[RMDB]
Chemical mapping of a 177-nucleotide RNA with 2A3 and DMS. The data come from the RNA Mapping Database (RMDB), library OK2TST. DMS adducts were read by reverse transcription with MarathonRT.
RNA sequence: GGGAACGACUCGAGUAGAGUCGAAAACCAUGCUUGCCGUGCGGGUAUCUCCUUCGGCAAGGAUGACAUGGUCAUCCCGGAAUCGAAGGCCAAGAUCGUUGCGGAAACCGAAGCGCUUACGACCGAACUGAUCGAUACGCUUCGGCGUAUCGAUCAGAAAAGAAACAACAACAACAAC
Reactivity to 2A3 in 0.01 (KOAc 150mM, MgCl2 10mM, bicine 150mM(pH8.5), 24C), signal-to-noise 1, nucleotides 027 to 126: c020c000a080u120g000c000u040u010g020c000c000g020u000g060c140g000g040g060u190a270u060c190u150c010c000u030u020c000g000g000c000a000a030g000g000a030u060g000a010c020a150u300g130g000u000c000a030u030c000c000c000g010g030a080a020u110c010g010a030a000g010g090c040c090a080a030g020a030u030c010g070u060u150g030c000g050g090a170a010a020c060c040g020a030a000g000c030g030c050u040u090a070c060g090a040c070c000g000a080a060
Reactivity to DMS in 0.01 (KOAc 150mM, MgCl2 10mM, bicine 150mM(pH8.5), 24C), signal-to-noise 1, nucleotides 027 to 126: c020c000a080u010g000c070u000u000g000c000c010g040u000g000c150g000g000g030u020a090u040c180u020c040c000u020u000c020g000g020c030a120a110g000g000a070u010g010a230c000a120u000g030g000u000c220a090u000c000c000c010g020g000a130a090u000c010g000a020a100g000g000c210c040a010a090g000a010u000c070g010u010u000g020c020g020g000a120a110a240c090c060g000a030a050g000c000g020c110u000u020a090c040g010a090c100c030g040a140a080